This 177-nucleotide RNA was probed chemically with DMS and 2A3.
RNA sequence: GGGAACGACUCGAGUAGAGUCGAAAAGAUAUGGACGUUUACGAAGCACAACAGCUGGUCUCGGAAACGAGACCAGACAUGUGCCGUACGGACGUCCUAAGUCAAAACGGGGCGUUCGCGCCCCGAACAUUGCUCUGGUGUUCGCACCAGAGCAAUGAAAAGAAACAACAACAACAAC
Reactivity to DMS in 0.01 (KOAc 150mM, MgCl2 10mM, bicine 150mM(pH8.5), 24C), signal-to-noise 3, nucleotides 027 to 126: g000a100u010a300u010g000g000a010c000g020u000u000u010a020c020g010a270a250g010c000a000c010a060a070c290a180g050c030u000g000g000u000c010u000c000g000g000a100a080a270c000g000a020g020a010c000c010a000g000a010c060a110u000g010u000g000c000c000g010u010a240c300g000g000a010c000g010u000c000c000u000a020a100g000u010c070a080a030a100a170c000g000g020g000g040c000g080u000u010c250g010c010g020c010c000c020c000g000a010a090
Reactivity to 2A3 in 0.01 (KOAc 150mM, MgCl2 10mM, bicine 150mM(pH8.5), 24C), signal-to-noise 1, nucleotides 027 to 126: g040a010u040a060u200g000g030a010c010g020u000u010u040a070c080g100a240a020g040c030a000c030a110a120c060a120g060c020u000g000g000u000c000u020c020g020g060a060a040a060c010g010a000g000a000c000c000a000g010a010c000a040u040g000u000g000c010c010g050u120a110c210g070g010a000c000g000u000c020c010u020a070a020g120u040c040a000a000a070a180c010g010g000g000g000c000g040u070u080c270g010c000g030c200c000c000c000g000a000a000

Description:
The DMS profile rests on 1,651 reads. DMS adducts were read by reverse transcription with MarathonRT. The RNA was probed in 150 mM KOAc, 10 mM MgCl2 and 150 mM bicine (pH 8.5) at 24 C.